[RMDB]
RNA sequence: GGGAACGACUCGAGUAGAGUCGAAAACAUGGUGGCAAGUACGUCGCGAUAUUGCUCCACCUGCAAUAGAAGCGUAGACAUCAACUGUAGCGAGAGCUACUCAACUUAUGGACCUUAGAGCAAGCGAAGACGACCGGUCCUGUCGGAAUUCGCUAGACACUAAUUUUAGUUUCGACUAAAAUUAGUGAAAAGAAACAACAACAACAAC
Reactivity to DMS in 0.01 (KOAc 150mM, MgCl2 10mM, bicine 150mM(pH8.5), 24C), signal-to-noise 3, nucleotides 027 to 156: c060a110u000g030g020u020g030g000c020a100a110g020u000a030c060g000u000c010g000c030g040a210u000a040u000u010g010c020u000c020c160a100c080c040u010g020c000a070a070u000a050g010a110a150g020c050g010u050a120g020a080c060a150u000c050a060a100c040u010g020u000a040g010c000g030a250g010a220g040c010u010a010c010u000c040a040a100c090u000u010a110u000g000g000a100c020c020u000u000a120g010a110g000c020a070a100g010c020g010a090a080g020a190c010g020a070c010c070g010g010u000c010c010u010g000u000c020g010g000a130a180u000u000c020g040c050u000a090g000a300
Reactivity to 2A3 in 0.01 (KOAc 150mM, MgCl2 10mM, bicine 150mM(pH8.5), 24C), signal-to-noise 7, nucleotides 027 to 156: c050a040u100g010g020u030g050g010c080a090a030g050u060a070c080g050u030c020g020c020g050a050u030a030u080u050g000c010u060c060c020a120c030c040u050g000c010a010a020u020a060g110a130a020g020c010g020u070a050g030a070c020a040u070c040a020a100c100u100g020u020a010g010c010g010a040g020a010g070c000u020a010c020u010c030a050a120c030u100u110a050u140g030g020a030c010c020u060u090a060g000a010g090c060a080a000g000c010g000a000a000g040a030c020g000a010c000c040g040g040u010c000c020u010g010u000c010g010g030a110a100u020u000c010g000c010u030a040g030a050
Notes
Chemical mapping of a 207-nucleotide RNA with DMS and 2A3. The reactions ran in a buffer of 150 mM KOAc, 10 mM MgCl2 and 150 mM bicine (pH 8.5), at 24 C. The data come from the RNA Mapping Database (RMDB), library OK3TST.